[RMDB]
RNA sequence: GGGAACGACUCGAGUAGAGUCGAAAAGUGAUAAAUGACAACACUAGGUAUUUUAUCAAUGGUCAUGAAGGUAUGUUUGGGAAGAAAUUGAUAGAUGUAGUAUCUGAGCUGAAAGAAUGGCUUUAUGGCCUUAAAUUCCGUUCGCGGAAUUUAAGGCAAAAGAAACAACAACAACAAC
Reactivity to DMS in 0.01 (KOAc 150mM, MgCl2 10mM, bicine 150mM(pH8.5), 24C), signal-to-noise 1, nucleotides 027 to 126: g040u000g010a060u000a020a090a050u030g000a150c110a080a080c060a100c110u000a060g010g000u000a090u010u000u010u010a040u010c010a070a040u000g000g010u000c060a020u000g000a100a020g000g000u010a030u000g010u010u020u000g000g000g010a080a110g020a050a070a110u000u000g010a060u000a040g010a070u000g010u000a070g020u000a040u000c070u010g000a040g040c040u000g000a070a040a080g020a060a060u010g000g020c000u000u000u000a040u030g010
Source: RMDB library OK2TRN, as collected in RNAgym.
Chemical mapping of a 177-nucleotide RNA with DMS.
Reactivities are given for positions 27 through 126.
Values are in units of 0.01, from 0 to 300, in steps of 10.
The RNA was probed in 150 mM KOAc, 10 mM MgCl2 and 150 mM bicine (pH 8.5) at 24 C.
DMS (dimethyl sulfate) methylates the pairing face of unpaired adenines and cytosines.